[RMDB]
RNA sequence: GGGAACGACUCGAGUAGAGUCGAAAAAUGCGUGAGCAAUUGAAGCUUUUUACGAGGGAAAUAGUCGAUUUUACAUUUCUUAUCUUAUCUGGCUUUGACUAUUACCAGACACUCUUGAUAAGCAGUACUAAUUUAUCGUCUUCGGACGAUAAAUUAGAAAAGAAACAACAACAACAAC
Reactivity to DMS in 0.01 (KOAc 150mM, MgCl2 10mM, bicine 150mM(pH8.5), 24C), signal-to-noise 3, nucleotides 027 to 126: a060u000g000c020g010u000g000a120g010c050a100a180u010u030g000a160a130g000c000u000u000u000u010u000a030c100g010a060g000g010g010a050a040a020u000a030g010u000c120g020a160u000u000u000u010a090c070a100u000u000u000c040u010u000a100u000c040u010u000a040u000c030u010g000g000c170u000u010u020g000a040c060u000a050u000u010a260c020c020a060g000a100c110a150c090u000c030u000u000g000a020u000a040a040g000c130a100g000u010a110
Reactivity to 2A3 in 0.01 (KOAc 150mM, MgCl2 10mM, bicine 150mM(pH8.5), 24C), signal-to-noise 3, nucleotides 027 to 126: a020u080g020c020g030u060g020a060g000c030a010a040u070u120g070a140a010g000c020u040u060u040u110u070a050c010g010a040g030g010g050a000a060a020u040a050g010u020c050g090a130u080u040u080u210a070c030a070u060u100u040c030u050u110a210u140c030u060u040a020u080c010u030g000g000c000u060u030u030g000a010c010u040a040u060u030a030c000c010a010g070a020c080a020c070u110c010u010u070g000a010u030a090a000g010c030a000g040u030a100
An RNA of 177 nucleotides, treated with DMS and 2A3 and read out base by base.
The DMS profile rests on 2,238 reads.
The 2A3 profile rests on 1,990 reads.
Values are in units of 0.01, from 0 to 300, in steps of 10.